RNA sequence: GGGAACGACUCGAGUAGAGUCGAAAAUUGGAUGAGUAAGAGGAGGACUGAGGUAAUAACUAAAGAACAGCAUCAACUGUUUCUAAGUCUUCUCCCACAGUCUCAUGAGUGUUUACAAAAGCACAAGCCUUGACAGUCUAUUCGUAGACUGUCAAGGAAAAGAAACAACAACAACAAC
Reactivity to DMS in 0.01 (KOAc 150mM, MgCl2 10mM, bicine 150mM(pH8.5), 24C), signal-to-noise 3, nucleotides 027 to 126: u010u000g010g010a070u000g000a050g000u000a170a100g010a110g000g020a020g020g000a030c000u020g000a100g000g010u000a050a050u000a040a090c080u010a100a060a110g020a010a090c000a000g050c090a050u010c300a110a110c000u000g000u000u000u000c010u010a130a070g010u000c030u000u000c000u020c020c000c030a110c070a110g000u000c030u000c030a030u000g020a120g010u000g000u020u000u000a110c300a070a090a060a020g000c070a030c030a230a180g010
Reactivity to 2A3 in 0.01 (KOAc 150mM, MgCl2 10mM, bicine 150mM(pH8.5), 24C), signal-to-noise 3, nucleotides 027 to 126: u150u140g140g020a030u010g010a030g030u050a090a050g090a100g110g020a010g020g000a010c010u020g020a030g060g040u040a090a140u130a220a100c050u070a120a060a090g010a010a010c010a000g000c020a170u060c020a100a100c000u010g000u050u100u000c030u020a030a020g000u000c000u090u000c000u040c000c010c010a110c020a000g060u020c000u000c020a000u040g040a000g080u030g030u050u040u060a120c130a020a200a020a000g000c000a000c010a030a040g040
This 177-nucleotide RNA was probed chemically with DMS and 2A3. Conditions: 150 mM KOAc, 10 mM MgCl2 and 150 mM bicine (pH 8.5), 24 C. For DMS the reverse transcriptase was MarathonRT. In probing experiments dimethyl sulfate is read out at A N1 and C N3, which are open when not base-paired.